[RMDB]
RNA sequence: GGGAACGACUCGAGUAGAGUCGAAAAGCGAGGUAUCGAACCCCGUACUUCCACGGUGGCGUUCUUCUCCACUGUCACCGGCGAACUCAUGGAUACCGCCGGUGUGAACGCCGAGUACUGGUACCGAGACGAAGGACACGUUCGCGUGUCCUUCGUCAAAAGAAACAACAACAACAAC
Reactivity to 2A3 in 0.01 (KOAc 150mM, MgCl2 10mM, bicine 150mM(pH8.5), 24C), signal-to-noise 1, nucleotides 027 to 126: g090c060g060a030g030g030u010a000u100c050g040a190a170c020c010c000c000g010u010a010c040u140u010c020c070a060c050g140g030u150g000g050c020g020u000u020c020u080u030c060u000c070c070a140c080u170g070u110c010a000c000c000g040g020c000g020a050a050c030u060c190a150u230g050g000a110u100a110c020c000g040c000c000g000g000u000g030u010g020a040a010c030g000c000c020g010a020g020u030a050c070u040g000g000u010a020c000c030g000a040
Reactivity to DMS in 0.01 (KOAc 150mM, MgCl2 10mM, bicine 150mM(pH8.5), 24C), signal-to-noise 2, nucleotides 027 to 126: g000c130g010a150g000g080u000a050u000c040g000a180a210c100c050c000c080g000u000a020c040u010u010c090c130a150c220g000g000u000g000g010c010g010u000u000c060u000u020c060u020c060c070a090c080u030g020u010c000a000c000c000g010g020c010g010a030a160c090u030c100a260u020g000g000a150u040a120c100c000g030c000c010g020g020u000g020u010g010a000a010c040g000c020c010g000a110g000u010a070c030u000g000g030u000a020c030c000g030a120